[RMDB]
RNA sequence: GGGAACGACUCGAGUAGAGUCGAAAAGCCGUACAAGAGCUUGGCUUAGAGAGUGCCGACUUUGAUGUUGAGAUCCUCUCCAGCGAGGCAAAGAAGGGAUUUCUCUUCAAGCGAUCGAGUGUGCGGAAGGUGGAUUCGAGUUCGCUCGAAUCCACCUAAAAGAAACAACAACAACAAC
Reactivity to DMS in 0.01 (KOAc 150mM, MgCl2 10mM, bicine 150mM(pH8.5), 24C), signal-to-noise 1, nucleotides 027 to 126: g010c000c010g030u010a020c010a130a110g010a200g000c060u000u000g020g020c300u000u000a020g000a030g030a030g020u010g000c000c000g010a190c010u000u000u000g000a200u020g040u000u000g010a100g000a240u010c110c040u020c040u000c090c160a030g020c060g000a040g000g040c010a010a040a020g000a050a300g000g020g000a060u030u030u030c000u000c000u000u010c030a020a050g000c000g000a160u000c030g000a150g020u000g010u000g040c000g000g030a040

The data come from the RNA Mapping Database (RMDB), library OK2TST.
An RNA of 177 nucleotides, treated with DMS and read out base by base.
For DMS, 782 sequencing reads were counted.